[RMDB]
Structure probing data (2A3 and DMS) for a 177-nucleotide construct. High DMS reactivity at an A or C suggests that its Watson-Crick edge is free.

RNA sequence: GGGAACGACUCGAGUAGAGUCGAAAACUUGUGAUUCAUUAUCGACACGGGUUCGGUGGUACCAGGCCGAACUCACCGGGAGGCACCCGGCACCAUGCAGUAUACAGAGAUUAGGCAUAUACCAAGGCCCUGGUACCAUAUUCGUAUGGUACCAGGGAAAAGAAACAACAACAACAAC
Reactivity to 2A3 in 0.01 (KOAc 150mM, MgCl2 10mM, bicine 150mM(pH8.5), 24C), signal-to-noise 4, nucleotides 027 to 126: c050u080u100g030u070g100a090u110u070c020a060u060u230a070u180c090g020a020c040a030c180g050g020g000u000u020c000g000g000u080g030g040u090a070c000c030a060g110g000c020c000g000a000a000c000u000c000a000c010c000g030g000g000a150g060g010c020a120c010c020c000g010g000c000a020c000c040a020u060g000c020a010g030u040a030u050a120c040a020g100a010g030a130u060u100a010g010g000c030a020u050a010u020a130c030c050a060a020g060g010
Reactivity to DMS in 0.01 (KOAc 150mM, MgCl2 10mM, bicine 150mM(pH8.5), 24C), signal-to-noise 2, nucleotides 027 to 126: c030u000u010g000u030g000a070u000u040c090a060u000u000a050u000c100g030a110c120a060c160g000g000g010u000u000c060g010g000u000g090g000u000a100c040c110a050g000g010c010c000g000a000a010c010u000c000a080c050c060g120g030g000a070g000g060c160a110c010c050c010g030g020c090a050c010c130a030u030g030c060a140g000u010a070u050a090c090a060g000a170g020a030u000u030a070g000g020c020a140u030a050u020a080c020c040a140a040g000g010
For DMS the reverse transcriptase was MarathonRT.